[RMDB]
Conditions: 150 mM KOAc, 10 mM MgCl2 and 150 mM bicine (pH 8.5), 24 C. This 177-nucleotide RNA was probed chemically with DMS. Reactivities are given for positions 27 through 126. For DMS the reverse transcriptase was MarathonRT.
RNA sequence: GGGAACGACUCGAGUAGAGUCGAAAAGCAGGGCAAGCUUGUCGUUCUUCAGGUCGAUGCCACUUUCCUUCUUGAACUCGGCAACCAGAUAUUCGACCAGACGAAUAUCGAAGUCUUCACCGCCAAAUCGUACCCAUGCAUUCGUGCAUGGGUACGAAAAAGAAACAACAACAACAAC
Reactivity to DMS in 0.01 (KOAc 150mM, MgCl2 10mM, bicine 150mM(pH8.5), 24C), signal-to-noise 1, nucleotides 027 to 126: g020c080a080g030g020g040c090a080a080g000c050u000u000g030u000c020g020u020u010c070u030u000c050a050g030g040u010c060g010a140u010g000c020c030a140c010u000u010u000c050c030u000u010c010u000u050g000a060a080c050u000c060g020g010c060a060a070c050c050a080g000a000u000a040u000u000c000g020a090c140c150a130g000a170c020g000a020a030u000a040u000c010g000a020a130g010u000c010u000u000c060a110c000c000g030c090c170a100a000a100